Chemical mapping of a 177-nucleotide RNA with DMS and 2A3. The DMS profile rests on 2,491 reads. Reactivities are given for positions 27 through 126. As a SHAPE reagent, 2A3 marks flexible, mostly unpaired nucleotides at the ribose 2'-OH.

RNA sequence: GGGAACGACUCGAGUAGAGUCGAAAAUGAAAGAGUUUCCUUUAACCUAUAUGGAAGCAAAGAUCAAGAAUACAACCUUCCCAUAUGGUUGACUUAAUUAUUCCGUAGGUUCCUGGAAGCUAAAAAACGAGUAGCAUUUAUUCGUAAAUGCUACUCGAAAAGAAACAACAACAACAAC
Reactivity to DMS in 0.01 (KOAc 150mM, MgCl2 10mM, bicine 150mM(pH8.5), 24C), signal-to-noise 3, nucleotides 027 to 126: u020g020a120a120a130g010a090g010u010u000u000c000c000u000u010u010a020a010c010c000u000a010u010a120u030g030g020a020a020g000c220a110a090a130g000a010u010c030a010a030g000a160a170u010a160c010a010a020c010c010u010u010c100c050c050a130u010a030u020g000g010u020u000g000a120c010u000u000a020a030u000u000a080u000u000c000c000g000u000a010g000g020u000u000c170c060u010g000g000a040a010g000c010u000a000a030a050a040a060a100
Reactivity to 2A3 in 0.01 (KOAc 150mM, MgCl2 10mM, bicine 150mM(pH8.5), 24C), signal-to-noise 2, nucleotides 027 to 126: u160g010a030a040a070g180a010g000u000u000u000c000c000u010u020u010a010a010c000c000u030a030u020a080u280g020g000a010a020g030c140a180a030a020g060a050u070c040a020a020g050a190a060u190a200c010a000a000c000c000u080u080c030c040c050a050u140a060u150g000g000u010u000g010a010c000u000u020a040a030u090u080a090u100u030c000c010g010u010a000g010g000u000u010c000c010u000g000g010a000a010g000c000u020a060a160a030a000a000a000